[RMDB]
Background
This 170-nucleotide RNA was probed chemically with DMS and 2A3. The DMS profile rests on 4,016 reads. It was measured as part of the RMDB library 15KLIB. The reactions ran in a buffer of 150 mM KOAc, 10 mM MgCl2 and 150 mM bicine (pH 8.5), at 24 C. The 2A3 profile rests on 2,613 reads.

RNA sequence: GGGAACGACUCGAGUAGAGUCGAAAAUCCAAAAAGAGUCAGAUGAGUAUAUUCUGGCUAAAGGGCCGUUACAAGUAGGAGAUUCAGUUCUCUUGCAAGGCCAUUCUCUAGCUAAGAAUAUCCUGCAGUAGCCGGUACUUCGGUACCGGCAAAAGAAACAACAACAACAAC
Reactivity to DMS in 0.01 (KOAc 150mM, MgCl2 10mM, bicine 150mM(pH8.5), 24C), signal-to-noise 2, nucleotides 027 to 129: u050c020c070a120a060a080a080a190g080a050g000u100c000a020g040a130u050g000a200g020u000a040u040a040u010u010c020u000g000g130c000u050a000a000a050g080g050g060c000c000g000u020u130a070c140a080a090g100u000a110g030g000a030g000a080u020u050c300a100g030u040u000c000u000c000u000u060g030c010a090a070g010g060c000c000a060u040u130c020u030c060u010a050g030c000u030a030a100g050a040a000u010a020u010c000c060u050g070c010a030g000u040a120
Reactivity to 2A3 in 0.01 (KOAc 150mM, MgCl2 10mM, bicine 150mM(pH8.5), 24C), signal-to-noise 3, nucleotides 027 to 129: u020c000c000a010a010a010a010a010g170a020g030u150c060a000g060a270u190g050a060g060u090a010u000a000u000u000c000u020g010g020c000u000a010a010a010g000g040g050c000c010g100u150u080a100c050a270a060g000u010a000g060g000a000g000a030u000u070c040a090g300u050u000c010u020c000u010u010g000c000a030a060g000g000c000c000a000u230u010c060u000c010u010a000g000c000u030a200a000g020a010a010u000a020u020c000c000u030g050c020a010g000u060a000